[RMDB]
RNA sequence: GGGAACGACUCGAGUAGAGUCGAAAAUCAAAAGACUGACAUCUGUGCCCAGUCUUUCAAAAAUAUCAAGAUGACCGCAUCUUACCCCUCAGAAGGAGCAUUGGUGAGUGACAGAUUUGCCUUCCACCUGUGCCGGUCAUUUCGAUGACCGGCACAGAAAAGAAACAACAACAACAAC
Reactivity to 2A3 in 0.01 (KOAc 150mM, MgCl2 10mM, bicine 150mM(pH8.5), 24C), signal-to-noise 1, nucleotides 027 to 126: u030c030a000a070a000a000g030a040c000u010g100a010c030a070u120c030u080g060u120g000c140c040c000a000g000u010c030u000u000u030c010a000a000a020a050a120u170a050u170c100a030a050g000a090u110g090a040c010c040g000c100a030u000c000u080u070a120c030c030c000c050u050c090a100g010a110a080g050g020a010g000c050a090u050u110g010g000u010g020a010g000u050g000a000c000a020g090a030u150u130u150g000c000c000u030u030c010c000a040c000

Chemical mapping of a 177-nucleotide RNA with 2A3. The reactions ran in a buffer of 150 mM KOAc, 10 mM MgCl2 and 150 mM bicine (pH 8.5), at 24 C. It was measured as part of the RMDB library OK1LIB. For 2A3 the reverse transcriptase was SuperScript II with manganese.